Conditions: 150 mM KOAc, 10 mM MgCl2 and 150 mM bicine (pH 8.5), 24 C. The record gives the reactivity of an RNA of 207 nucleotides to DMS and 2A3. For 2A3, 1,565 sequencing reads were counted. DMS adducts were read by reverse transcription with MarathonRT. For 2A3 the reverse transcriptase was SuperScript II with manganese.
RNA sequence: GGGAACGACUCGAGUAGAGUCGAAAAGCUCUGUAAUGGGAUGGGAUCCGAAGCCCAAUUGAGGGAUAAUACAGGCUCUCCCAUCCAACUCCUAUUCCAACACGUCCUCGUCGUACAGAGUGGUAACUAAGGUAUAGCUCCUUCGGGAGCUAUACAAGAUCCAUCUAUUCUUCGGAAUAGAUGGAUCAAAAGAAACAACAACAACAAC
Reactivity to DMS in 0.01 (KOAc 150mM, MgCl2 10mM, bicine 150mM(pH8.5), 24C), signal-to-noise 2, nucleotides 027 to 156: g000c020u000c030u030g030u000a040a100u000g010g020g020a080u000g030g010g000a070u050c050c070g000a180a180g000c030c010c010a060a220u010u020g000a190g000g010g000a140u000a080a170u000a100c140a180g000g020c010u010c040u000c020c000c000a060u000c010c030a070a040c020u000c000c020u000a130u000u000c040c010a060a100c040a030c090g010u000c010c010u000c020g020u000c070g010u010a050c000a040g000a030g050u000g020g040u000a040a160c040u000a070a120g000g000u000a000u000a000g010c000u000c000c000u000u000c300g070g020g030a000g020c000u000a000u010a000c000a080a120
Reactivity to 2A3 in 0.01 (KOAc 150mM, MgCl2 10mM, bicine 150mM(pH8.5), 24C), signal-to-noise 3, nucleotides 027 to 156: g020c000u010c000u020g050u100a130a120u190g080g000g010a000u020g010g000g010a050u140c000c040g040a110a080g020c020c010c030a020a080u110u170g100a120g020g010g030a030u110a160a020u120a150c170a040g000g000c010u000c000u000c030c010c030a000u000c000c000a000a000c010u010c010c000u050a100u080u070c040c000a090a000c030a040c100g050u070c010c030u110c050g060u030c010g000u030a010c000a040g030a030g010u020g000g070u070a080a100c090u070a000a160g140g000u000a000u000a000g000c000u000c010c000u010u030c050g130g010g000a000g000c000u000a000u000a000c000a000a000